[RMDB]
RNA sequence: GGGAACGACUCGAGUAGAGUCGAAAAUAACAGCGUUCUGGCGUGAGAACGUCAGGCAACUACCAAUCACUCUAUGGUAGUUGCAUUGUGUGAGAACACAAUGAUGCUGUUUAAGAGUGAUUGAUACGAACUAGACGUAUUUCGAUAUGUCUAGUUCAAAAGAAACAACAACAACAAC
Reactivity to DMS in 0.01 (KOAc 150mM, MgCl2 10mM, bicine 150mM(pH8.5), 24C), signal-to-noise 9, nucleotides 027 to 126: u020a020a010c000a000g000c010g030u000u000c000u000g010g000c000g010u000g010a270g010a150a010c000g010u000c000a010g000g000c000a010a000c000u000a000c000c000a070a140u010c010a020c010u000c000u000a250u000g000g010u000a000g010u010u000g000c000a020u000u000g010u000g000u000g000a260g000a210a020c000a010c000a000a010u000g000a010u000g000c000u000g000u000u000u000a040a030g000a010g000u000g000a280u040u030g000a100u030a110c210
Reactivity to 2A3 in 0.01 (KOAc 150mM, MgCl2 10mM, bicine 150mM(pH8.5), 24C), signal-to-noise 9, nucleotides 027 to 126: u070a000a000c000a000g000c000g010u010u000c000u000g000g000c000g000u010g020a090g030a060a010c000g000u000c000a000g000g000c000a000a000c000u000a000c000c000a000a030u050c000a000c000u000c000u010a040u050g000g000u000a000g000u000u000g000c000a000u000u000g000u000g000u010g040a080g030a040a000c000a000c000a000a000u000g000a000u000g000c000u000g000u000u000u010a010a000g000a000g000u000g020a060u030u130g060a030u050a070c080
This 177-nucleotide RNA was probed chemically with DMS and 2A3. As a SHAPE reagent, 2A3 marks flexible, mostly unpaired nucleotides at the ribose 2'-OH. For DMS, 45,823 sequencing reads were counted. DMS adducts were read by reverse transcription with MarathonRT. The reactions ran in a buffer of 150 mM KOAc, 10 mM MgCl2 and 150 mM bicine (pH 8.5), at 24 C. Source: RMDB library OK1LIB, as collected in RNAgym.